[RMDB]
Chemical mapping of a 177-nucleotide RNA with DMS. DMS adducts were read by reverse transcription with MarathonRT. Source: RMDB library TTRINS, as collected in RNAgym. Reactivities are given for positions 27 through 126. The RNA was probed in 150 mM KOAc, 10 mM MgCl2 and 150 mM bicine (pH 8.5) at 24 C.
RNA sequence: GGGAACGACUCGAGUAGAGUCGAAAAGAUAUGGAUGUAUUGACCCAGUCUAAGCAUGGUUUGUUUGGAUAUCGGAAACGAUAUUCCAAUGACCAUGCUUAGACUGGGUCAAUCACAUCCUAAGUCAUCAAUAACUUCUCUUCGGAGAAGUUAUUGAAAAAGAAACAACAACAACAAC
Reactivity to DMS in 0.01 (KOAc 150mM, MgCl2 10mM, bicine 150mM(pH8.5), 24C), signal-to-noise 3, nucleotides 027 to 126: g020a080u000a300u000g010g010a020u000g020u000a030u010u000g000a010c000c000c000a010g000u010c010u000a000a000g010c000a000u000g000g000u000u000u010g030u010u000u010g010g010a030u000a000u000c000g000g000a160a090a300c000g020a010u000a000u010u000c010c000a030a010u000g000a000c010c000a000u000g000c000u000u000a000g000a010c000u000g000g000g000u000c000a000a000u000c220a000c010a010u000c000c000u010a020a110g010u010c060a250